[RMDB]
RNA sequence: GGGAACGACUCGAGUAGAGUCGAAAAGCAGUCCUCACUGGGAGCUUCAGAGGGGUUGGCGAGAAGUUCUCCAUCAGCUUCACGGGCAAAUGGUAGCUGCCCAAUCAAUGGAUGGAUGCAGAUUCAUUUUUGUUAUGAAAAUGCAUAAGAGGCUGGAGGCUAUGCCUCCUUUCGAGGAGGCAUAGCCAAAAGAAACAACAACAACAAC
Reactivity to 2A3 in 0.01 (KOAc 150mM, MgCl2 10mM, bicine 150mM(pH8.5), 24C), signal-to-noise 1, nucleotides 027 to 156: g060c010a030g030u040c000c000u030c020a080c000u050g070g000g030a010g070c010u160u100c040a030g080a060g090g030g000g010u040u090g030g020c070g040a050g000a060a010g010u020u030c020u000c080c000a050u060c020a020g050c000u080u030c060a020c120g000g000g000c040a080a110a050u200g140g050u110a010g000c060u040g010c010c000c000a010a060u170c070a110a080u140g090g000a010u040g010g010a030u000g010c010a000g020a050u000u010c010a040u020u050u130u090u160g190u160u020a010u030g000a000a000a000a000u030g010c020a010u080a140a080g090a000g030g010c040u000g030g000a010